[RMDB]
RNA sequence: GGGAACGACUCGAGUAGAGUCGAAAAGAAUCGCCCCCUUCCCUCAGGGUGGAGUUCACCCUCCCCAACCGGGGAAAGAUCACCGGCAUGGGGAUCCCCCAUGGAGUCACGCUCAUCGUGGGAGGGGAGAGGGGAAGGAAUUCGUUCCUUCCCCUCUAAAAGAAACAACAACAACAAC
Reactivity to DMS in 0.01 (KOAc 150mM, MgCl2 10mM, bicine 150mM(pH8.5), 24C), signal-to-noise 2, nucleotides 027 to 126: g010a070a070u000c090g000c040c020c010c010c010u010u010c010c000c030u000c140a080g010g010g010u020g010g010a160g010u010u010c050a090c010c020c040u010c010c000c000c000a070a200c040c010g000g000g000g010a030a070a110g020a180u010c020a050c000c010g000g010c080a120u000g020g000g010g020a060u000c050c010c000c010c040a120u010g000g010a040g000u000c130a160c160g000c080u000c030a110u010c100g000u030g000g000g000a040g030g020g000g020
Notes:
This 177-nucleotide RNA was probed chemically with DMS. Conditions: 150 mM KOAc, 10 mM MgCl2 and 150 mM bicine (pH 8.5), 24 C. For DMS, 1,385 sequencing reads were counted. For DMS the reverse transcriptase was MarathonRT.